[RMDB]
RNA sequence: GGGAACGACUCGAGUAGAGUCGAAAAGCUACUGGGCAGAUGUGUGGACAGCUAUGAGCCAAACUUGGGACGUUUGGUUUUUAGCAGGUGUAGAGACCGUCUGGGCAGCAGAAACAAGACAACUAAUCAUAUUUAGAUACAAUCAAAUGUCCAAACACCAGUACGUGACGUUCGCGUCACGUACUGGAAAAGAAACAACAACAACAAC
Reactivity to 2A3 in 0.01 (KOAc 150mM, MgCl2 10mM, bicine 150mM(pH8.5), 24C), signal-to-noise 2, nucleotides 027 to 156: g050c010u010a040c020u070g040g060g000c040a040g000a070u070g110u070g000u090g050g030a030c020a010g000c000u000a010u010g010a010g000c000c000a020a000a000c010u060u050g210g050g010a010c020g000u020u000u000g000g000u000u030u000u000u010a030g010c030a040g000g080u050g020u170a060g050a020g040a110c020c030g030u000c010u030g030g090g000c020a030g000c020a020g050a020a100a030c040a000a060g060a060c030a050a000c080u120a100a020u080c090a070u020a120u190u080u060a060g020a050u090a080c090a110a020u060c030a050a070a120u040g060u000c030c010a020a000a000c070a050